An RNA of 177 nucleotides, treated with DMS and 2A3 and read out base by base.
Values cover nucleotides 27 to 126.
Conditions: 150 mM KOAc, 10 mM MgCl2 and 150 mM bicine (pH 8.5), 24 C.
As a SHAPE reagent, 2A3 marks flexible, mostly unpaired nucleotides at the ribose 2'-OH.
DMS adducts were read by reverse transcription with MarathonRT.
It was measured as part of the RMDB library M2PK50.
RNA sequence: GGGAACGACUCGAGUAGAGUCGAAAAGAAGUACUGUUCGCAGUACUUCAAAGGGCAACGGCAAGGCCAAGCCGAAGCCGAACGGCAAGCCGAAGGCCAAAAAAACCGUUCCCUUCGGGGAACGGAACUUGUCUCCAUAGUUCGCUAUGGAGACAAGAAAAGAAACAACAACAACAAC
Reactivity to DMS in 0.01 (KOAc 150mM, MgCl2 10mM, bicine 150mM(pH8.5), 24C), signal-to-noise 2, nucleotides 027 to 126: g020a000a010g000u000a000c000u010g020u000u010c080g120c000a030g010u000a000c000u000u000c010a050a060a090g000g000g050c060a030a300c000g010g000c020a050a120g000g000c030c050a220a070g020c000c010g000a170a270g010c010c000g010a010a090c140g000g000c040a140a050g000c010c020g020a060a190g000g050c000c030a000a000a070a080a100a100a050c000c000g000u000u000c000c000c010u010u010c100g010g010g010g000a000a000c000g030g010a000a030
Reactivity to 2A3 in 0.01 (KOAc 150mM, MgCl2 10mM, bicine 150mM(pH8.5), 24C), signal-to-noise 1, nucleotides 027 to 126: g020a000a000g000u030a000c000u000g010u030u140c220g000c080a010g000u000a010c000u000u000c010a010a040a000g040g000g020c030a060a030c000g000g010c020a070a180g100g010c010c020a030a000g030c040c010g030a030a020g000c010c020g030a100a030c080g050g000c060a060a020g120c010c040g090a150a080g090g000c000c000a090a010a000a000a000a000a070c010c010g000u020u020c000c000c010u020u010c170g070g000g000g010a010a010c000g000g000a010a020